[RMDB]
This 207-nucleotide RNA was probed chemically with 2A3 and DMS.
For DMS, 3,405 sequencing reads were counted.
It was measured as part of the RMDB library M2RFPK.
The RNA was probed in 150 mM KOAc, 10 mM MgCl2 and 150 mM bicine (pH 8.5) at 24 C.
RNA sequence: GGGAACGACUCGAGUAGAGUCGAAAAUCGCAAUACCGCGGCAAGUGGAGUUAGCGAGAGGAGGCUGGGUUUUGGCUUCCUUAAGCAAUCGGUCACCGAGAAGGUGUGGUCGUUACCGUGAAAUUCCGUGACAAAAUAACGUUCGCGUUAUUUUGAACCGUAUAUGGGUAUUCGUACCCAUAUACGGAAAAGAAACAACAACAACAAC
Reactivity to 2A3 in 0.01 (KOAc 150mM, MgCl2 10mM, bicine 150mM(pH8.5), 24C), signal-to-noise 5, nucleotides 027 to 156: u050c010g000c020a020a070u010a170c040c000g010c020g050g050c130a140a100g030u070g060g050a110g010u080u120a030g040c010g000a020g000a000g030g000a010g010g000c010u090g080g170g150u110u090u170u230g070g000c000u010u000c000c000u000u010a020a010g000c000a010a050u060c020g000g020u010c000a000c010c040g030a050g150a250a090g100g040u120g000u020g050g010u020c020g000u020u070a060c020c020g020u030g070a080a060a010u100u030c010c020g040u080g060a040c010a000a010a000a000u000a000a010c010g000u020u040c200g000c010g050u020u000a000u000u000u000u030g030a060a050
Reactivity to DMS in 0.01 (KOAc 150mM, MgCl2 10mM, bicine 150mM(pH8.5), 24C), signal-to-noise 2, nucleotides 027 to 156: u020c030g000c020a090a150u010a040c060c030g010c020g020g020c060a060a100g030u010g000g020a100g010u000u000a200g030c020g000a300g000a050g000g000a010g010g000c010u010g020g010g020u020u000u000u000g020g030c000u000u000c000c000u010u000a010a300g010c020a070a040u010c030g020g010u000c050a150c010c030g000a180g010a110a120g000g030u000g020u010g010g020u000c020g000u000u000a090c000c040g000u000g010a090a090a300u020u000c020c020g000u000g010a190c000a020a000a010a000u000a000a010c010g000u000u000c280g000c060g030u000u000a000u010u000u020u000g000a030a160